[RMDB]
RNA sequence: GGGAACGACUCGAGUAGAGUCGAAAAAGCUUGCCAGCUAACUAACGCUACCAACCAUGGGAAAAACCCUGGCUCCAAGACCCGCGGAACCAGGCCGGGAGCCUAUUGGGAAGUAGACUUCACCGAGCAGUAGUGUCUAUUUCGAUAGACACUACUGAAAAGAAACAACAACAACAAC
Reactivity to 2A3 in 0.01 (KOAc 150mM, MgCl2 10mM, bicine 150mM(pH8.5), 24C), signal-to-noise 9, nucleotides 027 to 126: a000g040c050u090u090g070c030c020a020g030c030u030a040a080c030u030a090a010c070g020c020u010a040c020c000a030a020c000c020a040u040g000g000g050a050a110a020a060a090c000c000c000u010g010g000c010u010c010c010a120a130g060a180c010c010c020g030c040g030g000a020a040c020c000a020g020g000c020c010g040g020g000a030g030c000c000u090a130u140u170g010g010g010a050a010g010u030a010g020a080c020u050u060c080a100c060c010g020a040g040
Reactivity to DMS in 0.01 (KOAc 150mM, MgCl2 10mM, bicine 150mM(pH8.5), 24C), signal-to-noise 5, nucleotides 027 to 126: a110g010c030u000u010g000c060c070a060g010c010u000a060a120c130u030a100a090c130g000c020u010a040c020c010a060a300c020c010a050u030g000g010g010a040a070a120a110a110c130c000c010u000g000g000c030u020c000c010a070a080g010a150c030c010c040g000c140g000g000a040a030c020c010a040g000g010c020c110g000g000g000a110g020c000c010u000a020u050u020g000g000g010a250a120g020u010a030g020a050c060u000u000c030a100c030c010g010a100g000
Background
The record gives the reactivity of an RNA of 177 nucleotides to 2A3 and DMS. For 2A3, 15,883 sequencing reads were counted. The RNA was probed in 150 mM KOAc, 10 mM MgCl2 and 150 mM bicine (pH 8.5) at 24 C. High DMS reactivity at an A or C suggests that its Watson-Crick edge is free. The data come from the RNA Mapping Database (RMDB), library OK1LIB.